[RMDB]
Overview:
An RNA of 177 nucleotides, treated with 2A3 and DMS and read out base by base. The 2A3 profile rests on 2,117 reads. For DMS the reverse transcriptase was MarathonRT.
RNA sequence: GGGAACGACUCGAGUAGAGUCGAAAAGAUAUGGACACAGGACAUGCUCCGGGAUCGGAAACGAUCCUCGAGCAACAGCCUGGUCCUAAGUCGCAGCCCUGUACUCUGUUCGCAGAGUACAGGGCAAGAAGUGAAAAUCCUUCGGGAUUUUCACUUCAAAAGAAACAACAACAACAAC
Reactivity to 2A3 in 0.01 (KOAc 150mM, MgCl2 10mM, bicine 150mM(pH8.5), 24C), signal-to-noise 1, nucleotides 027 to 126: g010a000u080a040u130g010g010a050c140a000c010a300g020g080a000c100a170u070g010c010u000c020c040g000g000g000a000u000c000g020g000a110a040a000c000g000a000u000c010c000u000c020g000a010g030c010a000a020c020a000g130c000c000u010g000g000u000c000c000u000a140a030g060u040c010g000c140a000g000c010c000c010u020g010u000a000c010u020c010u040g100u080u110c300g000c170a000g000a000g000u000a000c000a010g000g000g000c010a000a010
Reactivity to DMS in 0.01 (KOAc 150mM, MgCl2 10mM, bicine 150mM(pH8.5), 24C), signal-to-noise 2, nucleotides 027 to 126: g010a050u000a300u010g000g020a020c000a040c000a000g000g000a040c130a180u000g000c000u010c010c150g000g000g010a010u010c000g000g000a080a120a150c000g040a000u000c000c000u000c300g010a020g010c000a000a020c120a140g000c000c000u000g000g000u000c000c000u010a000a160g020u000c000g000c300a110g010c000c010c010u000g010u010a020c000u000c000u000g000u000u000c210g020c000a020g010a000g010u000a000c010a000g000g000g010c000a000a000
Reactivities are given for positions 27 through 126.